[RMDB]
RNA sequence: GGGAACGACUCGAGUAGAGUCGAAAAGAUAUGGAUCUCCUGGGAGAGGAUGUAUCGGAAACGAUACAAGUCCUCGAAGAACAGGAGAGUCCUAAGUCAAAUCUCUUAGCGUUCGCGCUAAGAGAAACAUAGCAGUAUAGUUCGCUAUACUGCUAUGAAAAGAAACAACAACAACAAC
Reactivity to DMS in 0.01 (KOAc 150mM, MgCl2 10mM, bicine 150mM(pH8.5), 24C), signal-to-noise 9, nucleotides 027 to 126: g000a010u000a010u010g000g000a250u000c000u000c000c000u000g000g010g000a010g010a010g020g010a040u000g000u000a000u000c000g020g000a010a000a020c000g010a010u000a000c000a010a100g010u010c000c000u000c000g000a060a120g000a260a220c010a010g000g000a010g010a010g010u010c000c000u000a000a100g000u000c010a100a120a150u000c000u000c000u000u000a000g010c000g020u000u010c260g020c010g020c000u000a000a000g000a010g000a010a060a130
Reactivity to 2A3 in 0.01 (KOAc 150mM, MgCl2 10mM, bicine 150mM(pH8.5), 24C), signal-to-noise 5, nucleotides 027 to 126: g000a000u010a000u040g000g000a000u000c000u000c000c000u010g010g020g000a020g010a000g010g010a040u050g000u010a000u000c000g000g010a000a000a000c000g000a000u000a010c000a010a020g210u010c010c000u000c000g020a120a000g000a000a000c010a000g010g000a010g010a010g010u040c000c000u000a000a000g010u000c020a030a180a300u020c000u000c000u000u000a000g000c000g040u040u050c300g000c000g000c140u000a000a000g000a000g000a000a000a000
Background
Chemical mapping of a 177-nucleotide RNA with DMS and 2A3. Source: RMDB library TTRDEL, as collected in RNAgym. For DMS the reverse transcriptase was MarathonRT. For 2A3 the reverse transcriptase was SuperScript II with manganese. Conditions: 150 mM KOAc, 10 mM MgCl2 and 150 mM bicine (pH 8.5), 24 C.